Background
Structure probing data (DMS and 2A3) for a 207-nucleotide construct. Values cover nucleotides 27 to 156. The DMS profile rests on 3,804 reads. It was measured as part of the RMDB library M2RFPK.
[RMDB]
RNA sequence: GGGAACGACUCGAGUAGAGUCGAAAAUGAGACAAACACGCUUCACAAUGUGCGGCAAAGAAACAUUGUUUAUGCAAAGGCACUUCGCAAUGUGUGCUCAAACAAUGCUUAUUCAAACACGCUUCACAAAAGAAUCAGUGGUUCGCCACUGAUUCAAGUUUCGUCUAUUGUUCGCAAUAGACGAAACAAAAGAAACAACAACAACAAC
Reactivity to DMS in 0.01 (KOAc 150mM, MgCl2 10mM, bicine 150mM(pH8.5), 24C), signal-to-noise 2, nucleotides 027 to 156: u000g000a110g010a150c060a070a130a120c080a140c100g000c040u000u000c040a090c040a080a040u000g040u000g010c020g010g030c080a140a080a080g030a110a040a040c010a030u000u020g000u010u000u000a090u040g020c100a070a110a050g000g000c030a010c000u000u000c170g010c130a200a120u010g050u000g030u020g000c010u000c090a070a030a030c040a030a040u000g020c010u000u010a090u000u010c080a150a130a040c050a040c080g020c000u000u000c030a050c050a050a060a120a150g020a030a000u000c010a010g050u000g000g020u000u010c300g020c020c000a020c000u000g030a010u000u000c010a040a040
Reactivity to 2A3 in 0.01 (KOAc 150mM, MgCl2 10mM, bicine 150mM(pH8.5), 24C), signal-to-noise 1, nucleotides 027 to 156: u150g010a020g050a040c070a030a180a010c080a030c130g080c040u110u110c060a030c050a130a150u070g010u010g010c030g010g000c030a070a080a040g040a030a050a020c010a010u010u010g040u000u030u050a080u110g070c060a060a070a100g050g000c000a010c000u150u150c160g050c210a120a160u150g020u010g010u020g040c010u040c060a020a030a010c010a010a020u010g010c030u110u150a090u090u090c050a040a060a030c050a020c120g020c010u050u050c020a020c020a040a090a030a030g000a000a000u000c000a000g010u000g040g020u030u050c170g030c050c000a000c000u000g000a000u000u000c000a000a000